An RNA of 177 nucleotides, treated with 2A3 and DMS and read out base by base. For DMS, 5,974 sequencing reads were counted. For 2A3, 5,307 sequencing reads were counted. For DMS the reverse transcriptase was MarathonRT.
[RMDB]
RNA sequence: GGGAACGACUCGAGUAGAGUCGAAAAUCAUAGCUUCACCAGCGCGACCUGGUCCUCCACGAGCUGGCCCGCGGCCGCGAGCUCAGCUUUUACCUUCCCGCCCACCACCUCGCGCAGGUACACCGAAGAAGUGAAAUAGUUUCGACUAUUUCACUUCAAAAGAAACAACAACAACAAC
Reactivity to 2A3 in 0.01 (KOAc 150mM, MgCl2 10mM, bicine 150mM(pH8.5), 24C), signal-to-noise 3, nucleotides 027 to 126: u080c020a030u060a150g050c040u140u130c060a030c040c000a020g030c010g010c010g030a060c010c040u040g020g000u020c010c010u030c020c020a040c060g000a020g000c010u010g000g020c000c020c000g030c030g080g080c100c110g010c050g010a020g000c050u080c290a000g020c000u030u020u110u100a070c000c010u030u020c000c000c000g010c000c010c000a020c010c020a020c000c010u020c010g020c010g000c020a000g000g000u020a020c020a030c030c020g050a170a100
Reactivity to DMS in 0.01 (KOAc 150mM, MgCl2 10mM, bicine 150mM(pH8.5), 24C), signal-to-noise 5, nucleotides 027 to 126: u000c070a100u010a090g010c080u010u000c090a080c040c030a090g010c050g010c040g010a070c070c080u000g010g020u000c030c020u000c030c060a110c180g000a040g010c010u010g010g010c020c010c020g020c040g020g000c170c150g020c030g010a020g010c030u020c030a030g010c010u000u000u000u010a080c090c090u010u000c010c000c010g010c040c020c020a060c060c030a050c030c060u010c030g030c040g020c040a040g010g010u000a100c140a100c050c040g010a120a130